[RMDB]
Source: RMDB library TTRDES, as collected in RNAgym. Structure probing data (2A3 and DMS) for a 177-nucleotide construct. For 2A3 the reverse transcriptase was SuperScript II with manganese. Conditions: 150 mM KOAc, 10 mM MgCl2 and 150 mM bicine (pH 8.5), 24 C. For DMS, 1,542 sequencing reads were counted.

RNA sequence: GGGAACGACUCGAGUAGAGUCGAAAAGAUAUGGAUCACGUAGCUUUUGACGUCUUAACAGUCGGAAACGACUGGGAGGACGAUAAGCUACAUGAUCCUAAGUCAAACGUUCUGUUCGCAGAACGAAGAUGAAGUUGACGUUCGCGUCAACUUCAUCAAAAGAAACAACAACAACAAC
Reactivity to 2A3 in 0.01 (KOAc 150mM, MgCl2 10mM, bicine 150mM(pH8.5), 24C), signal-to-noise 2, nucleotides 027 to 126: g070a000u060a020u150g000g000a000u000c010a000c040g020u000a000g020c000u120u160u120u260g300a160c140g010u000c000u050u020a020a020c010a000g020u000c000g020g000a110a060a050c030g000a000c000u000g000g000g030a070g000g020a000c000g030a010u040a050a010g000c000u000a000c010a000u010g000a000u000c000c000u010a060a000g030u010c080a110a060a080c020g000u030u030c020u030g100u050u090c300g000c070a010g000a020a000c010g030a030a040
Reactivity to DMS in 0.01 (KOAc 150mM, MgCl2 10mM, bicine 150mM(pH8.5), 24C), signal-to-noise 2, nucleotides 027 to 126: g020a050u000a300u000g000g000a000u000c000a030c070g020u000a000g000c000u000u010u000u000g020a240c150g010u020c020u000u010a160a150c000a000g000u000c000g020g000a070a070a200c000g000a010c000u000g000g000g060a070g000g020a010c010g000a100u000a000a000g000c000u000a000c000a020u000g000a000u000c000c000u000a000a080g000u000c020a130a090a250c030g020u000u000c000u000g010u000u030c240g030c010a010g010a000a020c010g010a070a130